[RMDB]
This 177-nucleotide RNA was probed chemically with 2A3 and DMS. The DMS profile rests on 1,556 reads. The data come from the RNA Mapping Database (RMDB), library OK2TST. Reactivities are rounded to 0.1 and cut off at 0 and 3. The RNA was probed in 150 mM KOAc, 10 mM MgCl2 and 150 mM bicine (pH 8.5) at 24 C.
RNA sequence: GGGAACGACUCGAGUAGAGUCGAAAAGAUUAUAGAGCUGUUGAACAAGGCGCUGUGAAUAGCAGAGGGAGUCAUUAGAAACCGGUCAGUACGCUUAAACGGAGUGGGAGUGGAUAGACCUGCACUCGUUUUGGGAUGUAUUCGUACAUCCCAAAACAAAAGAAACAACAACAACAAC
Reactivity to 2A3 in 0.01 (KOAc 150mM, MgCl2 10mM, bicine 150mM(pH8.5), 24C), signal-to-noise 1, nucleotides 027 to 126: g000a040u270u240a080u120a110g040a000g090c030u010g000u040u030g020a090a070c080a050a070g010g040c030g000c030u000g000u030g080a030a120u100a080g030c020a010g000a070g020g010g020a010g040u010c030a070u070u080a030g090a030a040a010c030c010g020g000u040c010a010g040u010a010c020g000c060u000u000a030a200a020c050g040g000a040g050u090g000g010g000a060g030u000g020g000a040u020a040g030a020c030c010u040g010c040a060c060u130c070
Reactivity to DMS in 0.01 (KOAc 150mM, MgCl2 10mM, bicine 150mM(pH8.5), 24C), signal-to-noise 2, nucleotides 027 to 126: g010a160u000u010a090u030a060g010a090g000c010u010g000u010u000g010a040a070c100a050a150g000g000c090g000c070u010g020u010g000a070a100u010a080g010c060a050g010a100g000g010g010a110g010u000c040a040u000u010a100g010a050a160a080c060c050g010g020u000c040a070g000u000a070c150g000c060u000u000a050a080a070c100g000g020a090g010u010g010g020g000a090g000u000g010g000a090u010a060g000a060c020c010u000g050c090a080c120u010c130